An RNA of 177 nucleotides, treated with 2A3 and DMS and read out base by base.
RNA sequence: GGGAACGACUCGAGUAGAGUCGAAAAGUGCAUGGGCAUAAGCCCGCCUAACUGUGAGACCAACAAGUCGAGCAGAUGCGAAAGCAGGCCCAAGUGAUCCGGCGGUAGAAAGUGGAAUUGCCGUCGCCCUGGUGGUGUUGUUCGCAACACCACCAGGAAAAGAAACAACAACAACAAC
Reactivity to 2A3 in 0.01 (KOAc 150mM, MgCl2 10mM, bicine 150mM(pH8.5), 24C), signal-to-noise 3, nucleotides 027 to 126: g140u110g000c000a080u040g050g030g000c040a080u070a200a110g000c010c010c020g010c000c000u060a060a070c000u000g010u010g010a010g000a010c030c000a090a130c080a200a030g000u000c000g010a020g000c000a000g010a060u040g000c000g020a140a010a010g020c040a000g000g060c000c000c000a030a030g030u060g030a060u100c080c020g010g000c000g000g000u060a060g100a140a180a010g080u210g100g070a130a120u040u050g000c000c000g000u000c000g020c000
Reactivity to DMS in 0.01 (KOAc 150mM, MgCl2 10mM, bicine 150mM(pH8.5), 24C), signal-to-noise 2, nucleotides 027 to 126: g030u090g000c000a080u010g000g010g010c000a070u000a070a150g010c050c110c000g000c040c130u060a170a020c000u010g020u000g000a300g000a030c000c040a120a220c300a100a010g000u000c000g000a300g000c020a000g000a100u020g000c000g020a040a110a160g010c040a240g000g000c000c020c050a060a060g050u000g030a050u000c130c000g010g020c000g010g000u010a000g000a100a010a110g060u000g000g000a160a030u090u000g000c010c010g000u000c000g000c180

Notes
The data come from the RNA Mapping Database (RMDB), libraries RFM100 and RFMREP. Reactivities are given for positions 27 through 126. The RNA was probed in 150 mM KOAc, 10 mM MgCl2 and 150 mM bicine (pH 8.5) at 24 C.